[RMDB]
RNA sequence: GGGAACGACUCGAGUAGAGUCGAAAAGAUAUGGAGUAGGAUCGCGAUAAGAAGGUGUCGGAAACGACACGCUUCUUUUGACGCGAGAAUACUCCUAAGUCAAAACGGUACACUUCGGUGUACCGAAUCUCGAUUAAUACUUCGGUAUUAAUCGAGAAAAAGAAACAACAACAACAAC
Reactivity to 2A3 in 0.01 (KOAc 150mM, MgCl2 10mM, bicine 150mM(pH8.5), 24C), signal-to-noise 4, nucleotides 027 to 126: g030a010u050a020u110g000g000a000g000u010a010g050g090a070u000c000g000c050g080a120u110a300a010g000a000a010g000g000u010g010u020c000g000g020a060a040a020c000g010a000c000a000c010g060c010u010u010c020u030u030u020u100g130a080c060g000c010g000a010g000a020a010u000a000c010u000c000c000u010a060a000g040u010c010a000a000a100a180c020g010g010u010a000c000a000c010u030u130c300g180g010u010g000u000a000c000c000g000a000a030
Reactivity to DMS in 0.01 (KOAc 150mM, MgCl2 10mM, bicine 150mM(pH8.5), 24C), signal-to-noise 5, nucleotides 027 to 126: g000a040u000a300u000g020g000a010g020u000a010g010g030a300u000c000g030c000g020a120u000a010a010g010a010a000g010g010u010g020u010c000g010g000a100a070a140c000g020a000c000a000c000g000c010u000u000c000u000u000u000u010g020a170c120g030c000g000a010g000a300a170u000a010c000u000c000c000u000a010a070g000u000c030a100a140a100a220c010g010g000u000a000c010a000c000u000u020c240g020g010u000g000u010a000c000c000g000a020a030
Structure probing data (2A3 and DMS) for a 177-nucleotide construct.
Source: RMDB library TTRDES, as collected in RNAgym.